[RMDB]
RNA sequence: GGGAACGACUCGAGUAGAGUCGAAAAGAACUCCACCAGCGGACACCUUCAGAUCGCGAUGGUUGUGCUGGCGCUGCUGAUCGCCGGGCUCACGGCCGGAGGGGCUUUCCGCAUGGCCAGCGGACUGCCCCGGUAGUAGUUUCGACUACUACCGGGGAAAAGAAACAACAACAACAAC
Reactivity to 2A3 in 0.01 (KOAc 150mM, MgCl2 10mM, bicine 150mM(pH8.5), 24C), signal-to-noise 2, nucleotides 027 to 126: g020a080a080c000u000c010c020a060c030c020a010g030c040g060g040a030c020a020c030c010u060u070c000a050g020a290u130c070g000c040g140a090u100g000g090u060u120g110u120g040c050u040g000g000c040g020c050u080g000c010u050g020a070u070c020g020c050c000g080g010g050c030u040c030a060c030g080g000c020c030g010g050a070g060g050g010g020c010u040u040u000c010c000g050c000a020u080g090g030c000c000a000g000c010g040g020a040c020u030g040
Reactivity to DMS in 0.01 (KOAc 150mM, MgCl2 10mM, bicine 150mM(pH8.5), 24C), signal-to-noise 3, nucleotides 027 to 126: g020a120a150c080u010c030c000a090c070c030a070g030c030g020g000a080c130a070c070c060u010u010c060a110g010a060u010c080g010c100g000a060u010g010g010u000u000g010u010g010c040u000g000g010c070g000c080u010g000c080u010g010a090u000c070g010c010c020g010g010g000c030u000c130a080c150g000g010c020c010g010g010a120g010g020g010g010c040u010u000u010c010c050g010c000a060u010g000g000c050c080a100g010c020g000g000a030c150u010g000
Annotation: Chemical mapping of a 177-nucleotide RNA with 2A3 and DMS. The RNA was probed in 150 mM KOAc, 10 mM MgCl2 and 150 mM bicine (pH 8.5) at 24 C. 2A3 adducts were read by reverse transcription with SuperScript II with manganese. The DMS profile rests on 2,987 reads. Source: RMDB library OK2TST, as collected in RNAgym.